Structure probing data (DMS and 2A3) for a 177-nucleotide construct. For 2A3 the reverse transcriptase was SuperScript II with manganese. The data come from the RNA Mapping Database (RMDB), library OK1LIB. The reactions ran in a buffer of 150 mM KOAc, 10 mM MgCl2 and 150 mM bicine (pH 8.5), at 24 C. The DMS profile rests on 2,490 reads. For DMS the reverse transcriptase was MarathonRT.
[RMDB]
RNA sequence: GGGAACGACUCGAGUAGAGUCGAAAAUUACUGAAGAUAACGAACUAAUGGCUUACUUCUACAUAGUUGAUACACCCGUAGAUGAUCUCAUUUCAGUUACAUCUAAUGUAGCUUAUAGAUACUGGAAGUAAGCCACUUUUUUCGAAAAGUGGCUUACAAAAGAAACAACAACAACAAC
Reactivity to DMS in 0.01 (KOAc 150mM, MgCl2 10mM, bicine 150mM(pH8.5), 24C), signal-to-noise 2, nucleotides 027 to 126: u000u000a040c070u000g010a070a050g010a170u020a070a080c060g000a040a140c080u000a020a030u000g020g000c040u000u010a040c030u020u020c000u000a060c100a020u050a030g030u030u000g000a120u050a090c080a090c030c030c070g020u000a070g020a060u020g000a090u000c030u000c070a090u030u020u010c130a020g010u000u000a050c070a040u000c100u010a040a070u000g000u010a010g000c090u030u000a050u050a060g030a090u030a020c130u030g000g010a080a050
Reactivity to 2A3 in 0.01 (KOAc 150mM, MgCl2 10mM, bicine 150mM(pH8.5), 24C), signal-to-noise 4, nucleotides 027 to 126: u150u050a070c080u140g040a070a010g070a140u120a130a030c070g020a070a040c090u160a150a040u130g090g000c010u020u030a000c000u000u000c000u010a030c030a160u190a020g060u030u100g060a050u080a130c050a040c020c000c010g020u030a040g010a110u130g030a080u010c020u010c080a180u040u120u050c020a020g000u010u010a020c010a060u040c110u180a120a120u040g000u000a010g000c020u030u040a060u030a110g080a010u050a170c010u050g000g030a050a100